[RMDB]
RNA sequence: GGGAACGACUCGAGUAGAGUCGAAAAGGGAUAUUCUUUGACCUGGAGGAGGCAGUGAUGAGGGAAAGGGAAGACAGCGUGGGAACCAUCUUGAUAAGAAGCAUGGGGUUCUGAGAAAUAGCCUCCUAGGAUUGGUACACUGCAGCUGGUGGCAGAAUCACGCAUUUAAUUUCGAUUAAAUGCGUGAAAAAGAAACAACAACAACAAC
Reactivity to 2A3 in 0.01 (KOAc 150mM, MgCl2 10mM, bicine 150mM(pH8.5), 24C), signal-to-noise 3, nucleotides 027 to 156: g060g020g010a070u060a100u200u070c070u070u090u130g050a070c010c000u040g030g020a060g020g010a010g010g000c040a040g040u040g120a110u080g020a100g000g000g020a100a080a060g010g010g020a020a010g080a030c040a010g030c010g060u070g010g020g010a010a000c030c000a040u040c020u040u080g050a100u080a230a090g100a090a010g060c030a060u070g000g000g000g040u060u050c070u060g070a050g070a060a080a020u080a020g000c000c000u030c010c020u030a030g000g040a040u050u100g020g000u020a030c070a010c060u040g020c010a030g000c020u040g020g020u010g050g000c030a000g030a020a020
Reactivity to DMS in 0.01 (KOAc 150mM, MgCl2 10mM, bicine 150mM(pH8.5), 24C), signal-to-noise 2, nucleotides 027 to 156: g010g010g020a040u000a110u000u000c040u010u010u010g010a080c050c020u000g000g010a210g090g030a070g000g080c040a090g020u000g010a100u010g010a120g000g040g010a090a050a100g000g000g010a100a080g030a060c060a000g030c050g080u040g000g020g000a110a060c020c040a060u000c040u000u010g000a200u000a040a110g000a110a080g020c070a070u000g010g030g040g010u000u000c070u000g010a080g020a030a060a060u000a090g010c010c000u000c010c000u000a040g010g000a110u020u010g040g000u000a050c090a140c060u000g020c060a110g030c050u010g030g030u000g000g040c090a090g000a050a230

Overview: The data come from the RNA Mapping Database (RMDB), library OK3TST. Chemical mapping of a 207-nucleotide RNA with 2A3 and DMS. Values cover nucleotides 27 to 156. The reactions ran in a buffer of 150 mM KOAc, 10 mM MgCl2 and 150 mM bicine (pH 8.5), at 24 C.